[RMDB]
RNA sequence: GGGAACGACUCGAGUAGAGUCGAAAAACAUGGUGAUCUGACGUGCUAGUAUGGAUCGUACUGAUCAGACGUACACGGAUCCGGUACCAUGCACAUGUCUAGCAUGGAUCGAUGCUAGGAUCCAGCACGGCCAUAACGACUUCGGUCGUUAUGGCCGAAAAGAAACAACAACAACAAC
Reactivity to 2A3 in 0.01 (KOAc 150mM, MgCl2 10mM, bicine 150mM(pH8.5), 24C), signal-to-noise 3, nucleotides 027 to 126: a000c040a040u030g060g000u040g020a030u000c020u040g000a010c010g000u000g010c020u050a050g000u020a040u040g070g000a020u060c030g040u180a170c080u200g010a020u030c010a040g150a150c030g000u040a020c050a050c070g020g010a010u000c010c000g010g000u000a020c000c000a010u010g050c010a020c020a100u300g120u210c140u090a050g000c010a000u010g010g000a000u070c140g060a030u100g010c010u050a180g000g020a000u000c000c020a000g010c010a000
Reactivity to DMS in 0.01 (KOAc 150mM, MgCl2 10mM, bicine 150mM(pH8.5), 24C), signal-to-noise 2, nucleotides 027 to 126: a030c080a100u010g000g000u010g010a090u000c040u010g020a100c050g090u020g030c050u000a060g080u000a020u000g000g000a020u000c000g020u010a090c120u000g010a080u000c020a060g010a300c020g000u000a010c060a150c300g030g000a040u010c000c030g000g050u000a060c020c000a030u000g000c020a130c230a090u000g000u000c120u060a110g000c040a030u000g040g000a070u000c090g000a130u000g010c050u000a060g010g000a030u040c000c000a190g000c050a090